[RMDB]
RNA sequence: GGGAACGACUCGAGUAGAGUCGAAAAGAUAUGGACCAGCACCAUCGAUCAUGUCAUUCGGAAACGAAUGCAUGGGAGGAAUUGGUCCUAAGUCAGAGCAUUUCAAUUCUUCGGAAUUGAAAUGCAACUGAAGGGAGAUCUUCGGAUCUCCCUUCAGAAAAGAAACAACAACAACAAC
Reactivity to DMS in 0.01 (KOAc 150mM, MgCl2 10mM, bicine 150mM(pH8.5), 24C), signal-to-noise 2, nucleotides 027 to 126: g020a050u000a230u000g000g000a000c000c010a000g020c300a170c000c020a180u000c170g010a120u010c000a000u000g000u030c010a000u000u010c000g010g000a030a060a080c020g000a000a000u000g000c000a010u000g000g000g010a100g000g010a050a070u010u010g000g010u000c010c000u000a030a060g000u000c030a150g010a150g000c000a010u000u000u000c000a000a000u000u000c000u000u030c150g030g000a010a000u000u000g000a000a000a000u000g010c000a080a030
Reactivity to 2A3 in 0.01 (KOAc 150mM, MgCl2 10mM, bicine 150mM(pH8.5), 24C), signal-to-noise 1, nucleotides 027 to 126: g000a010u080a020u140g000g010a030c000c010a000g090c070a050c030c000a060u300c170g180a220u110c020a000u020g300u170c020a020u030u000c000g000g000a060a050a010c000g020a000a000u020g000c010a000u000g010g040g090a060g000g000a020a070u050u030g030g000u010c000c010u020a100a000g050u020c000a030g030a020g210c010a000u010u050u020c010a030a000u010u010c000u000u070c300g180g010a020a020u000u000g000a000a010a000u010g010c020a010a010

Record summary: Chemical mapping of a 177-nucleotide RNA with DMS and 2A3. 2A3 is a SHAPE reagent: it acylates the 2'-hydroxyl of flexible nucleotides of all four kinds. Reactivities are given for positions 27 through 126. The 2A3 profile rests on 1,865 reads. Conditions: 150 mM KOAc, 10 mM MgCl2 and 150 mM bicine (pH 8.5), 24 C. For 2A3 the reverse transcriptase was SuperScript II with manganese.